An RNA of 177 nucleotides, treated with 2A3 and DMS and read out base by base. The RNA was probed in 150 mM KOAc, 10 mM MgCl2 and 150 mM bicine (pH 8.5) at 24 C. The data come from the RNA Mapping Database (RMDB), library OK2TST. For DMS the reverse transcriptase was MarathonRT. The 2A3 profile rests on 1,137 reads.
RNA sequence: GGGAACGACUCGAGUAGAGUCGAAAAUAGAGAAUUUGUCAGUUCUAUGAUAGAGUAUGUUGCGAAUACAGGCAUAAAAAUAGAUGAUAAAAUGGUGGAAUGGACCUAUUCUCAGUAUAGGGCUAAGGAUUUGGUAAACUUUCGAGUUUACCAAAUCAAAAGAAACAACAACAACAAC
Reactivity to 2A3 in 0.01 (KOAc 150mM, MgCl2 10mM, bicine 150mM(pH8.5), 24C), signal-to-noise 2, nucleotides 027 to 126: u090a010g040a000g040a020a060u020u080u070g030u040c040a060g040u040u100c040u010a060u040g090a040u080a090g070a000g130u060a010u050g040u050u080g050c040g080a040a010u170a070c020a030g010g020c010a040u090a040a100a030a000a000u080a040g070a020u080g020a030u050a110a180a040a040u000g120g010u010g040g030a030a090u060g010g000a000c010c010u000a030u020u030c020u000c000a020g000u020a060u100a100g090g030g050c020u110a040a030g110
Reactivity to DMS in 0.01 (KOAc 150mM, MgCl2 10mM, bicine 150mM(pH8.5), 24C), signal-to-noise 3, nucleotides 027 to 126: u000a080g010a100g020a070a070u010u010u000g010u000c030a100g010u000u000c010u000a030u000g010a160u000a090g020a150g000u000a030u000g010u000u000g020c150g000a140a080u010a050c090a090g010g000c040a040u000a020a060a070a090a060u010a070g000a050u010g000a060u010a020a030a060a090u010g000g020u010g000g000a090a050u000g000g010a020c010c030u000a020u000u000c070u000c070a100g010u000a030u010a040g010g010g020c090u000a080a130g010